[RMDB]
RNA sequence: GGGAACGACUCGAGUAGAGUCGAAAAUGAAAGGCCCAUCGAAUCCGGAAACAGCUGGUUCCGACCGAAACAUGUCGAAGCAUGACCUCUGCCGAGGUAGUCUGUGGGGUAGAGCGACGGAUUGGGGUCUGCAUCCACCAUUCGUGGUGGAUGCAGAAAAAGAAACAACAACAACAAC
Reactivity to DMS in 0.01 (KOAc 150mM, MgCl2 10mM, bicine 150mM(pH8.5), 24C), signal-to-noise 2, nucleotides 027 to 126: u030g000a070a130a090g000g010c030c000c000a040u020c030g010a000a040u000c050c010g000g000a090a050a020c090a100g000c030u000g030g000u020u000c090c010g000a040c000c020g000a070a110a300c070a070u020g010u030c100g040a120a100g030c030a020u000g000a140c040c030u000c000u030g020c220c210g000a090g040g000u000a160g000u000c060u010g020u000g000g020g000g010u000a070g010a050g010c070g000a090c000g010g000a040u000u010g040g000g000g000
Reactivity to 2A3 in 0.01 (KOAc 150mM, MgCl2 10mM, bicine 150mM(pH8.5), 24C), signal-to-noise 1, nucleotides 027 to 126: u260g010a070a090a000g030g000c010c000c000a030u110c030g120a010a000u000c000c000g000g030a130a180a030c070a070g000c030u000g150g000u090u040c020c000g060a020c050c000g010a100a000a030c000a030u050g060u100c020g030a040a050g000c010a010u050g040a070c000c020u000c020u110g110c080c110g000a000g000g000u000a030g090u030c100u050g060u060g050g000g070g000u020a020g010a000g060c030g000a010c000g040g000a000u010u020g000g000g000g000
Structure probing data (DMS and 2A3) for a 177-nucleotide construct. DMS adducts were read by reverse transcription with MarathonRT. The data come from the RNA Mapping Database (RMDB), library RFM100. The reactions ran in a buffer of 150 mM KOAc, 10 mM MgCl2 and 150 mM bicine (pH 8.5), at 24 C. The DMS profile rests on 1,911 reads.